[RMDB]
RNA sequence: GGGAACGACUCGAGUAGAGUCGAAAAGCUCGGAGACGAGCAAGGCUGACAAAACCCUGUCCCUACCUCCACGUGGUGUCGGCUGGAUAAUGCUGCAUUAUGUUGCAUUUAUCAACUGGGAAGCAAAGCAUUAGGUAAUAUUCGUAUUACCUAAUGCAAAAGAAACAACAACAACAAC
Reactivity to 2A3 in 0.01 (KOAc 150mM, MgCl2 10mM, bicine 150mM(pH8.5), 24C), signal-to-noise 9, nucleotides 027 to 126: g000c000u000c000g020g020a100g020a050c020g000a000g000c000a000a040g030g000c010u020g010a030c030a040a170a070a110c010c010c010u020g050u030c000c000c000u020a050c000c020u050c030c030a090c090g070u120g030g010u030g020u040c000g010g010c010u030g040g000a010u010a050a010u030g000c010u020g000c020a080u100u120a130u300g030u030u020g000c010a020u050u070u100a050u030c020a010a040c040u050g000g000g060a070a010g100c110a070a040a020
Reactivity to DMS in 0.01 (KOAc 150mM, MgCl2 10mM, bicine 150mM(pH8.5), 24C), signal-to-noise 7, nucleotides 027 to 126: g000c010u010c010g000g010a200g010a200c020g010a030g010c010a090a040g000g010c030u010g010a090c090a060a060a120a140c030c030c020u000g000u010c010c020c000u030a100c040c020u000c030c040a090c090g000u010g000g010u030g010u000c020g000g010c010u010g000g010a030u000a010a030u000g000c020u000g010c020a190u020u030a090u030g020u000u010g000c010a010u020u010u020a050u000c020a080a080c060u000g010g000g010a120a060g010c140a080a100a120